Structure probing data (DMS and 2A3) for a 207-nucleotide construct. For 2A3 the reverse transcriptase was SuperScript II with manganese.

RNA sequence: GGGAACGACUCGAGUAGAGUCGAAAAAAAGGUCAAUUACGGCGAAAUAAAGAAAACUGUUCAUGGAGGCACUAAUGCAAAUUACUUUUCCGGUAAAAAGUCUGACGAGUAUCUGAGUACUACAGUUAGAUCCAACAUUAAUCAACCUUGGAUCAAAAAUAAUUGUUCUGUUCGCAGAACAAUUAUUAAAAGAAACAACAACAACAAC
Reactivity to DMS in 0.01 (KOAc 150mM, MgCl2 10mM, bicine 150mM(pH8.5), 24C), signal-to-noise 2, nucleotides 027 to 156: a030a040a040g010g050u000c020a070a120u010u010a060c070g040g010c000g030a110a100a170u010a050a160a120g010a140a040a130a090c010u010g020u010u000c070a040u020g020g030a070g040g020c020a050c030u000a030a030u020g020c050a040a080a180u010u000a020c030u000u000u010u010c120c030g000g000u000a030a060a100a080a060g010u020c030u000g010a050c030g000a130g010u000a040u000c060u000g010a160g020u010a050c020u000a010c030a090g020u000u010a050g020a020u000c020c010a030a050c020a080u000u000a050a120u000c060a050a060c050c030u000u000g010g000a060u010c010a000a020a050
Reactivity to 2A3 in 0.01 (KOAc 150mM, MgCl2 10mM, bicine 150mM(pH8.5), 24C), signal-to-noise 2, nucleotides 027 to 156: a000a010a020g060g010u030c010a040a060u100u050a060c050g010g020c030g030a080a040a020u190a050a120a010g080a040a050a020a030c020u050g070u070u080c040a020u090g040g000a030g000g020c040a040c070u050a060a020u070g000c000a050a070a190u070u010a030c010u070u080u040u000c020c000g000g040u040a040a080a070a030a020g030u000c030u020g010a040c040g020a040g020u040a020u050c030u050g030a010g050u020a050c050u010a030c040a030g030u070u090a040g030a000u000c000c000a040a010c000a040u150u300a240a070u090c010a020a050c020c020u010u030g010g000a010u000c000a000a060a000

DMS adducts were read by reverse transcription with MarathonRT.